[RMDB]
RNA sequence: GGGAACGACUCGAGUAGAGUCGAAAAACUUAUGCCAUCUUUGCUUACUCACCACAGCUUACACUUGUGUUUCCGGAAGUGAAGAUGAUACUUUUAUUAUACACAUGUUUAGGUUUCAUGUGUACUUGCGGAUCCAUGUUCGCAUGGAUCAAAAGAAACAACAACAACAAC
Reactivity to 2A3 in 0.01 (KOAc 150mM, MgCl2 10mM, bicine 150mM(pH8.5), 24C), signal-to-noise 9, nucleotides 027 to 129: a000c100u180u090a080u180g080c030c000a010u000c000u010u000u000g010c000u020u040a200c010u040c080a040c030c000a010c010a020g040c020u220u220a070c070a040c080u100u130g010u010g020u030u120u060c070c050g020g010a000a000g000u000g010a000a000g000a000u010g010a000u050a050c010u070u160u060u040a150u160u100a060u040a010c000a000c000a000u010g050u040u090u120a190g100g060u060u090u070c000a000u000g000u000g010u020a060c020u050u130g060c080g080
Reactivity to DMS in 0.01 (KOAc 150mM, MgCl2 10mM, bicine 150mM(pH8.5), 24C), signal-to-noise 9, nucleotides 027 to 129: a000c070u020u020a040u050g000c100c010a000u010c000u030u010u000g000c000u000u000a110c000u030c090a070c300c010a000c050a000g030c070u040u090a100c300a110c170u070u000g000u010g000u010u030u040c110c180g000g000a070a020g030u010g000a030a040g010a020u000g020a030u020a050c090u040u050u040u050a090u060u040a120u010a000c000a010c010a020u000g000u050u030u060a100g020g010u010u010u010c010a000u000g020u000g000u020a030c110u000u060g030c180g010